[RMDB]
RNA sequence: GGGAACGACUCGAGUAGAGUCGAAAAUCCUUCCUCUCCUGGAGAGGUCUUCUGCCCUAGCCCGGUCUUCGAAGCUUCCUUCGGCUACUACCCGGUGGAAACAACUGAAGCUUCAACGCCUUUUUUUCCAAUCUUCUUUAGCACCGGGCUAGGGAGUCAAGAUAAUUAAGUUCGCUUAAUUAUCUUGAAAAGAAACAACAACAACAAC
Reactivity to 2A3 in 0.01 (KOAc 150mM, MgCl2 10mM, bicine 150mM(pH8.5), 24C), signal-to-noise 1, nucleotides 027 to 156: u000c010c010u030u150c000c010u030c010u010c020c230u250g040g100a010g000a000g020g000u010c030u150u010c020u100g120c020c000c000u000a000g000c000c020c000g030g000u000c040u070u100c120g010a010a000g010c010u050u030c000c060u090u080c000g040g000c070u130a130c020u090a100c030c000c000g030g000u040g030g000a080a060a050c030a030a040c050u090g040a090a000g030c000u150u120c100a030a040c060g080c010c010u090u090u080u000u000u120u070c050c020a070a070u000c020u130u000c010u060u140u100a040g010c040a040c000c000g010g010g000c000u000a000g000g000g000a000g000u000